Annotation:
Chemical mapping of a 207-nucleotide RNA with 2A3.
RNA sequence: GGGAACGACUCGAGUAGAGUCGAAAAGGGAUAAGGGAGUACUCUUAUCCCCACGUGGUUGGUGACAACCACGAUUAACAGGAGGUGUCCCGCUCCCACCUCCCUGAGUGCUCUCCACGCCUUCGGGCCUGGUUCGCACGCAGGUAACAGAGCUCAAGCAUUUAAAUGCGUUCGCGCAUUUAAAUGCAAAAGAAACAACAACAACAAC
Reactivity to 2A3 in 0.01 (KOAc 150mM, MgCl2 10mM, bicine 150mM(pH8.5), 24C), signal-to-noise 1, nucleotides 027 to 156: g000g000g000a010u000a010a010g020g010g010a100g150u150a300c000u010c000u010u000a010u000c020c000c030c000a020c000g000u000g000g000u010u000g020g040u070g080a050c000a000a000c000c000a000c000g010a030u150u130a150a050c030a060g010g050a010g000g010u010g020u080c040c030c040g020c030u010c000c000c000a010c000c000u020c010c010c020u000g020a000g000u010g000c010u010c010u020c000c000a020c030g000c000c000u050u140c210g040g000g000c000c000u000g000g000u010u040c010g010c020a000c000g020c000a000g010g000u020a080a030c090a140g010a020g020c020u070c120a080a060
Annotation: 2A3 adducts were read by reverse transcription with SuperScript II with manganese.